The record gives the reactivity of an RNA of 207 nucleotides to 2A3. Reactivities are given for positions 27 through 156. For 2A3, 1,255 sequencing reads were counted. The reactions ran in a buffer of 150 mM KOAc, 10 mM MgCl2 and 150 mM bicine (pH 8.5), at 24 C.

RNA sequence: GGGAACGACUCGAGUAGAGUCGAAAAGGGGUCUGGAGCGGGAUACAAUCUCGCAACAGCUCUACUGAAGCCUCCACGGUAGAGACAUGCGACUGUAUCAGCUCCAGACGGAGGCACCCAAAAGGCCUUAUCCGGCUUUCGAGCCGGAUAAGGCCAAGUACAUACCAUUCUUCGGAAUGGUAUGUACAAAAGAAACAACAACAACAAC
Reactivity to 2A3 in 0.01 (KOAc 150mM, MgCl2 10mM, bicine 150mM(pH8.5), 24C), signal-to-noise 1, nucleotides 027 to 156: g040g020g030g010u000c010u000g010g000a020g010c070g100g300g000a000u000a000c010a010a050u070c030u040c100g000c010a000a080c100a070g000c000u020c000u010a000c000u030g070a120a020g010c010c000u030c050c030a020c030g000g000u000a010g000a000g020a080c020a100u060g000c000g010a010c020u010g000u000a010u010c020a030g000c000u000c000c000a000g000a000c030g000g000a000g010g000c010a000c000c000c010a030a080a040a030g010g000c010c000u000u000a000u000c000c000g010g020c000u080u050u120c220g080a000g000c020c020g000g000a000u000a000a000g020g020c010c000a000a010